[RMDB]
RNA sequence: GGGAACGACUCGAGUAGAGUCGAAAAAUGGGAUGACACAUAAUUAGGUAUAUUUUUAAAAACUUGGAUUCAGCUUUAGGGCAAUGUGUCCCUAACAUAGAGAGGCACUAUUUCAGUUCACAUCUGCUGCCUCUGAUCAAAACACUCUCUUGCACUAGCUAAAUGGGAGUUUCGACUCCCAUUUAGCAAAAGAAACAACAACAACAAC
Reactivity to 2A3 in 0.01 (KOAc 150mM, MgCl2 10mM, bicine 150mM(pH8.5), 24C), signal-to-noise 2, nucleotides 027 to 156: a010u070g030g010g030a020u040g010a020c010a010c030a060u120a080a130u190u090a130g050g010u060a070u010a050u260u100u050u080u170a140a100a070a020a000c080u020u080g040g010a050u170u050c030a010g000c000u030u040u080a070g000g000g010c010a050a210u120g000u020g000u060c000c000c010u000a040a000c010a090u110a010g070a000g000a010g020g000c000a000c010u080a100u030u140u050c030a010g030u100u120c030a020c000a260u040c020u040g080c040u030g010c080c000u030c070u040g010a040u060c070a000a050a050a000c040a020c010u060c000u000c060u040u140g000c050a010c270u300a020